The record gives the reactivity of an RNA of 207 nucleotides to 2A3. The RNA was probed in 150 mM KOAc, 10 mM MgCl2 and 150 mM bicine (pH 8.5) at 24 C. Source: RMDB library ARCHII, as collected in RNAgym. 2A3 adducts were read by reverse transcription with SuperScript II with manganese.

RNA sequence: GGGAACGACUCGAGUAGAGUCGAAAAUUCGCCUGCGCGGAGCUUAAAGACGUCAAUUGAGUGGGCUAGUUUCGGUGAGCGUUCGCGGUGCCGAAGCGAAAUUUAAGCGAACUCGCCUGAUACACAUCCUGUCGACGGGAGUUGUAUCCGGUUAAACGACGUAUUUGAGGUUCGCCUCAAAUACGUCAAAAGAAACAACAACAACAAC
Reactivity to 2A3 in 0.01 (KOAc 150mM, MgCl2 10mM, bicine 150mM(pH8.5), 24C), signal-to-noise 3, nucleotides 027 to 156: u120u090c030g000c020c000u050g000c030g000c000g010g100a070g020c050u130u180a040a110a060g110a040c030g010u020c070a070a120u150u150g030a050g040u040g010g000g010c000u040a010g000u000u010u000c020g000g010u010g020a040g010c060g010u000u010c000g010c000g010g000u000g030c000c000g010a030a010g000c030g030a030a010a050u230u230u090a300a030g000c000g000a000a000c000u000c010g010c000c000u000g000a000u010a010c010a000c000a180u020c010c000u130g050u300c100g140a210c100g020g010g020a000g000u090u040g000u000a000u000c000c000g030g000u020u020a040a020a030c090